[RMDB]
RNA sequence: GGGAACGACUCGAGUAGAGUCGAAAAUUACGGUUAGAUGUCCGCACAACUCCGGACUCGCGGUGAGCGAUACAGCGCAGCGCGAGCAUCGCAGCUGCUGUGCGGACGGCUAGCAAGGGCUAGCCAAGCCGCUCAUAUGGUUCGCCAUAUGAGCGGCAAAAGAAACAACAACAACAAC
Reactivity to 2A3 in 0.01 (KOAc 150mM, MgCl2 10mM, bicine 150mM(pH8.5), 24C), signal-to-noise 2, nucleotides 027 to 126: u140u060a110c010g130g100u120u110a120g110a270u180g060u000c000c000g030c000a000c000a020a200c020u050c080c050g000g010a050c010u000c000g000c000g040g090u010g000a040g000c050g110a220u110a300c300a060g000c020g010c000a010g060c010g020c000g040a080g030c050a190u220c000g040c000a030g000c010u140g000c030u000g000u000g000c000g000g000a000c000g000g000c000u000a000g010c060a050a300g160g180g000c000u000a000g040c000c000a020a000

Chemical mapping of a 177-nucleotide RNA with 2A3. The data come from the RNA Mapping Database (RMDB), library OK1LIB.